[RMDB]
RNA sequence: GGGAACGACUCGAGUAGAGUCGAAAAGCAGAAUUGCUACAGAAGCCUAUGCCUCUCUUCGUGAAGGAUUUUCUAACCAGUAUGGUUGAAAGCGAAAGAAAGUUGUCCGAUUCUGCGACAUCGGCUAUAAGAAGUCCAGUUUCGACUGGACUUCUUAAAAAGAAACAACAACAACAAC
Reactivity to DMS in 0.01 (KOAc 150mM, MgCl2 10mM, bicine 150mM(pH8.5), 24C), signal-to-noise 1, nucleotides 027 to 126: g020c020a020g000a120a090u000u000g010c040u010a140c110a110g010a100a050g010c030c070u000a070u010g000c000c000u010c110u010c040u000u000c070g000u010g010a060a090g000g000a120u020u010u000u000c030u000a040a000c010c000a230g030u010a090u020g000g000u000u000g000a030a050a080g000c070g010a060a050a030g000a060a120a030g000u010u000g010u000c300c030g000a060u000u000c040u000g010c040g000a080c170a030u000c100g030g020c060u010a140